[RMDB]
RNA sequence: GGGAACGACUCGAGUAGAGUCGAAAAUUAAUCCUCCCGGGAGAGCCGCUAAGGGGGAAACUCUAUGCGGUACUGCCUGAUAGGGUGCUUGCGAGUCCCCCGGGAGGUCUCGUAGAGCCGUCGUAAACCUCAAUACAUUAUUCGUAAUGUAUUGAGGAAAAGAAACAACAACAACAAC
Reactivity to 2A3 in 0.01 (KOAc 150mM, MgCl2 10mM, bicine 150mM(pH8.5), 24C), signal-to-noise 5, nucleotides 027 to 126: u060u020a030a070u090c000c000u010c000c000c000g000g000g000a070g000a040g150c040c010g010c130u130a120a140g030g010g010g030g060a030a030a010c010u000c000u010a030u110g070c020g000g010u030a070c030u110g050c010c010u070g050a070u080a070g040g010g010u030g030c050u070u070g010c010g020a030g070u040c010c010c010c000c000g000g000g000a000g000g000u000c000u010c000g010u060a050g020a020g110c030c020g060u080c020g030u080a050a110a140
Reactivity to DMS in 0.01 (KOAc 150mM, MgCl2 10mM, bicine 150mM(pH8.5), 24C), signal-to-noise 6, nucleotides 027 to 126: u010u010a130a130u000c000c000u000c000c000c000g000g010g010a040g000a270g020c010c010g010c020u010a120a120g010g020g010g010g000a160a110a060c000u000c000u000a300u010g010c050g000g010u000a060c120u010g000c010c020u010g010a090u000a070g010g000g010u000g010c060u000u010g010c020g010a070g000u000c060c010c000c000c000g000g010g000a020g010g000u000c000u000c010g010u000a120g000a050g010c030c020g020u000c050g010u010a080a110a160

Structure probing data (2A3 and DMS) for a 177-nucleotide construct. The 2A3 profile rests on 10,236 reads. Reactivities are given for positions 27 through 126. 2A3 adducts were read by reverse transcription with SuperScript II with manganese.